RNA sequence: GGGAACGACUCGAGUAGAGUCGAAAAGUUGCGACCUUCGGGUCGCAACAAAUACCGAGGUACAUGCUCCGUAGAAUGUACAAACCCUUGGAAACAAGGGAAAAAGCUUAACCUUCGGGUUAAGCAAGUCUUUAUGGGUGUUCGCACCCAUAAAGACAAAAGAAACAACAACAACAAC
Reactivity to DMS in 0.01 (KOAc 150mM, MgCl2 10mM, bicine 150mM(pH8.5), 24C), signal-to-noise 1, nucleotides 027 to 126: g000u000u010g040c000g010a020c000c000u000u000c150g020g020g010u010c000g000c050a000a000c000a020a080a040u010a180c020c010g020a120g010g010u010a020c020a000u000g000c050u000c250c240g020u010a040g020a050a020u010g010u010a030c010a130a130a170c000c000c000u000u000g000g000a140a120a200c020a000a020g000g010g000a010a040a060a140a030g000c000u000u000a000a020c000c000u000u020c220g050g000g010u020u000a020a000g020c010a010a020